[RMDB]
RNA sequence: GGGAACGACUCGAGUAGAGUCGAAAAACAGAGGCCAAAUUACCAAACAAAUUCCAACCGGUAUAACUGAAUAGCGUUUUAAAUAACUCGGUAUUCCAAUACCAACCAAAACGGGUUAUGACAAACUGCCAGCGAGCAAAUCCAUAAUAGCAACCCAAAUCUCUAGGAGGUUCGCCUCCUAGAGAUUAAAAGAAACAACAACAACAAC
Reactivity to 2A3 in 0.01 (KOAc 150mM, MgCl2 10mM, bicine 150mM(pH8.5), 24C), signal-to-noise 1, nucleotides 027 to 156: a000c040a020g020a010g030g060c030c020a040a080a050u060u060a020c070c040a030a010a130c070a060a190a110u170u060c060c020a080a010c040c050g030g000u030a060u020a140a030c020u060g080a060a100u060a060g020c000g000u000u000u000u090a120a140a050u020a010a000c000u000c040g000g060u010a040u230u090c010c000a020a010u040a060c000c000a010a090c050c020a030a020a000a150c070g000g010g000u000u050a000u060g020a020c020a020a040a010c020u020g000c020c020a050g010c010g100a040g140c060a110a080a070u100c030c050a010u080a080a000u230a090g020c010a000a010c000c000c000a030
Structure probing data (2A3) for a 207-nucleotide construct. 2A3 adducts were read by reverse transcription with SuperScript II with manganese. Source: RMDB library OK3TST, as collected in RNAgym. Conditions: 150 mM KOAc, 10 mM MgCl2 and 150 mM bicine (pH 8.5), 24 C.